The data come from the RNA Mapping Database (RMDB), library 15KLIB. The record gives the reactivity of an RNA of 170 nucleotides to 2A3 and DMS. DMS adducts were read by reverse transcription with MarathonRT. As a SHAPE reagent, 2A3 marks flexible, mostly unpaired nucleotides at the ribose 2'-OH.
RNA sequence: GGGAACGACUCGAGUAGAGUCGAAAACCUCGGGAGUAGGCCCGUAGCGAUGGGGAGGGAUGCUAGGAGUUGGGGGAGACCGAAGCGAGGAGGAAAGCAAAGAAAGCAACGGGGCUAGCGAGUGGAUAGAGGACCUUGUUCGCAAGGUCCAAAAGAAACAACAACAACAAC
Reactivity to 2A3 in 0.01 (KOAc 150mM, MgCl2 10mM, bicine 150mM(pH8.5), 24C), signal-to-noise 3, nucleotides 027 to 129: c020c020u030c040g000g000g000a010g040u040a040g050g120c000c000c000g010u010a030g080c040g050a090u200g020g010g000g000a040g030g000g000a030u160g000c020u040a010g010g050a050g040u060u140g000g000g010g010g000a020g060a000c010c040g020a040a000g030c040g030a000g000g010a030g000g000a050a030a000g010c060a090a010a000g050a040a090a000g020c000a050a010c010g000g000g000g030c010u010a020g020c000g050a020g020u110g030g030a060u060a150g050a100
Reactivity to DMS in 0.01 (KOAc 150mM, MgCl2 10mM, bicine 150mM(pH8.5), 24C), signal-to-noise 4, nucleotides 027 to 129: c160c000u000c090g030g020g010a170g030u030a030g010g030c060c030c040g010u030a100g020c190g020a160u030g060g000g010g020a080g000g000g000a090u110g030c100u010a140g030g000a120g050u060u070g090g010g000g010g020a060g050a040c020c030g010a130a060g010c120g000a110g000g010a030g030g070a010a000a030g020c260a020a140a120g010a050a050a020g030c070a080a140c200g010g060g000g050c040u020a060g040c020g000a110g020u090g030g020a050u050a000g020a230
2A3 adducts were read by reverse transcription with SuperScript II with manganese.